[RMDB]
RNA sequence: GGGAACGACUCGAGUAGAGUCGAAAAGAAGAAGACAGAACUUGUUGACAAGUGGAAUAUGUAAGGGAUAAAACAGCAGGAAGAGGUUCCUUGCCUGGGAUAUUUGUGGUGUCCCUGAAAAAAAAAGCAAGAAGCGUAUCUUCGGAUACGCUUCUUGAAAAGAAACAACAACAACAAC
Reactivity to DMS in 0.01 (KOAc 150mM, MgCl2 10mM, bicine 150mM(pH8.5), 24C), signal-to-noise 1, nucleotides 027 to 126: g030a120a060g010a100a090g080a070c100a110g000a100a130c060u020u010g010u000u010g000a140c060a070a120g000u000g010g000a070a090u000a030u000g010u010a140a040g000g000g010a040u000a000a080a100a050c030a070g020c030a050g010g010a050a070g000a140g010g010u000u010c060c010u000u000g010c060c040u010g000g000g010a100u000a010u010u010u010g030u000g000g060u000g030u010c000c000c030u020g000a000a010a000a020a000a110a090a050a180g010
This 177-nucleotide RNA was probed chemically with DMS. Reactivities are rounded to 0.1 and cut off at 0 and 3. DMS adducts were read by reverse transcription with MarathonRT. Source: RMDB library OK2TST, as collected in RNAgym.